[RMDB]
RNA sequence: GGGAACGACUCGAGUAGAGUCGAAAAGAUAUGGAAUGAAUAGCUUUUGACGGGACAUCGGAAACGAUGUCAACCGAUAAGCUACAUUCCUAAGUCAAAGUUCGACAUCCUUCGGGAUGUCGAACAACAUCCUGCACGAGUUCGCUCGUGCAGGAUGAAAAGAAACAACAACAACAAC
Reactivity to 2A3 in 0.01 (KOAc 150mM, MgCl2 10mM, bicine 150mM(pH8.5), 24C), signal-to-noise 2, nucleotides 027 to 126: g000a000u000a010u050g000g010a030a010u040g040a230a230u000a030g000c020u080u120u160u300g220a070c010g000g030g030a000c010a000u000c010g000g000a020a010a030c000g000a000u000g000u000c000a000a070c010c000g230a230u090a270a020g000c060u000a000c000a010u000u000c010c000u000a040a010g010u030c070a280a000a010g000u000u010c000g000a010c010a010u010c000c000u070u100c280g080g030g010a000u000g000u000c010g000a000a000c000a010a000
Reactivity to DMS in 0.01 (KOAc 150mM, MgCl2 10mM, bicine 150mM(pH8.5), 24C), signal-to-noise 1, nucleotides 027 to 126: g000a020u000a300u010g000g000a000a000u010g010a140a160u000a020g010c000u000u000u000u000g000a250c180g060g000g000a020c000a000u020c000g000g000a050a030a100c030g010a010u010g010u010c020a000a100c020c010g000a170u010a000a000g010c000u000a030c010a000u000u000c000c000u000a010a070g010u000c020a100a200a160g010u000u000c000g020a000c000a010u000c000c000u020u000c180g000g000g000a000u000g000u010c000g000a010a000c020a120a120